[RMDB]
RNA sequence: GGGAACGACUCGAGUAGAGUCGAAAAGAUAUGGACAGGUACGCAGCAACAGCUAUCAUCGGAAACGAUGAUAGACAUGCUGGUAUACUGUCCUAAGUCAAAAUCUACCGCCCUUCGGGGCGGUAGAGAAAUAGAAGGGCUUCGGCCCUUCUAUUUCAAAAGAAACAACAACAACAAC
Reactivity to DMS in 0.01 (KOAc 150mM, MgCl2 10mM, bicine 150mM(pH8.5), 24C), signal-to-noise 1, nucleotides 027 to 126: g020a050u030a300u000g000g000a030c000a000g010g020u010a000c000g020c030a010g010c000a040a120c300a130g020c000u010a010u000c000a030u010c000g030g030a150a130a170c000g010a020u000g000a000u000a000g010a040c090a160u000g030c010u000g000g000u000a000u000a130c000u010g000u010c000c010u000a010a110g010u000c000a110a160a120a160u000c000u000a000c000c000g000c000c010c000u000u040c300g040g000g010g000c010g000g010u010a000g010a030